[RMDB]
RNA sequence: GGGAACGACUCGAGUAGAGUCGAAAACUCCCGAUUCGUCGGGAGAAAAAUCCUAAGUCGAUCACUAUGAAAGGCAAGGCGCCAUUCGGAAACGAAUGACGCUGAUGACCCUUUCACGAAUGAUCGAUAUGGAAAAAAAAGGUGCUUCGGCACCUAAGGUUAUUGAAGAUUUCGAUCUUCAAUAACCAAAAGAAACAACAACAACAAC
Reactivity to 2A3 in 0.01 (KOAc 150mM, MgCl2 10mM, bicine 150mM(pH8.5), 24C), signal-to-noise 4, nucleotides 027 to 156: c000u000c000c000c000g000a020u050u040c130g040u010c030g060g000g000a020g000a070a030a010a000a010u040c030c000u060a130a030g010u000c000g000a000u000c000a020c080u070a030u080g000a000a000a000g020g010c040a030a080g010g000c000g000c000c000a000u000u000c000g030g060a100a080a080c010g000a000a000u000g010a010c000g010c000u010g010a020u060g000a010c000c000c010u000u000u000c010a010c050g100a130a300u020g000a000u000c000g010a000u020a030u020g010g020a020a020a020a010a000a070a020a050g050g030u090g000c010u060u110c200g190g010c010a000c000c000u010a050a040
Reactivity to DMS in 0.01 (KOAc 150mM, MgCl2 10mM, bicine 150mM(pH8.5), 24C), signal-to-noise 1, nucleotides 027 to 156: c010u000c000c040c000g020a020u000u000c210g060u000c070g020g000g010a050g060a000a020a070a060a090u000c010c010u000a070a290g000u010c000g010a040u000c010a020c000u010a080u010g010a030a020a010g010g010c010a130a090g000g030c030g070c000c010a030u000u030c020g010g050a160a130a300c010g010a010a000u000g000a000c000g050c030u010g000a030u010g000a070c300c000c040u010u010u010c010a010c020g020a050a040u010g010a020u000c000g000a020u000a170u010g030g020a000a000a000a080a160a140a090a010g000g010u000g030c000u000u000c240g050g000c010a020c000c000u000a010a100
An RNA of 207 nucleotides, treated with 2A3 and DMS and read out base by base. The reactions ran in a buffer of 150 mM KOAc, 10 mM MgCl2 and 150 mM bicine (pH 8.5), at 24 C. The data come from the RNA Mapping Database (RMDB), library RNAMAK. Values cover nucleotides 27 to 156.